[RMDB]
RNA sequence: GGGAACGACUCGAGUAGAGUCGAAAACCAGUCCUUCGGGACUGGCAAGACCGUAGGUCUUCAAGCUGCUUCGACUAUCAAGCUUCGAAAGAGGCUUGACGAAUCGAAGAACUACAGCGAAGAGACCUAAACGGCGCAAACGCCUUUCGAGGCGUAAUGUACAAUACUGAUUCGUCAGUAUUGUACAAAAAGAAACAACAACAACAAC
Reactivity to DMS in 0.01 (KOAc 150mM, MgCl2 10mM, bicine 150mM(pH8.5), 24C), signal-to-noise 2, nucleotides 027 to 156: c000c000a010g020u000c000c000u000u000c300g050g020g010a000c000u000g000g050c000a020a070g000a080c000c010g030u010a010g010g030u000c000u000u020c000a040a300g010c010u000g010c020u000u000c000g020a020c050u000a070u000c000a030a030g030c010u000u010c000g010a120a090a250g000a020g000g010c000u000u000g000a020c030g000a060a040u000c000g010a050a110g010a070a130c030u010a290c000a080g020c000g000a300a120g000a030g000a060c000c000u010a010a030a070c000g000g040c000g030c070a080a080a090c000g010c000c000u000u000u030c190g020a020g000g010c000g020u000a000a070
Annotation:
The record gives the reactivity of an RNA of 207 nucleotides to DMS. Source: RMDB library RNAMAK, as collected in RNAgym. Conditions: 150 mM KOAc, 10 mM MgCl2 and 150 mM bicine (pH 8.5), 24 C.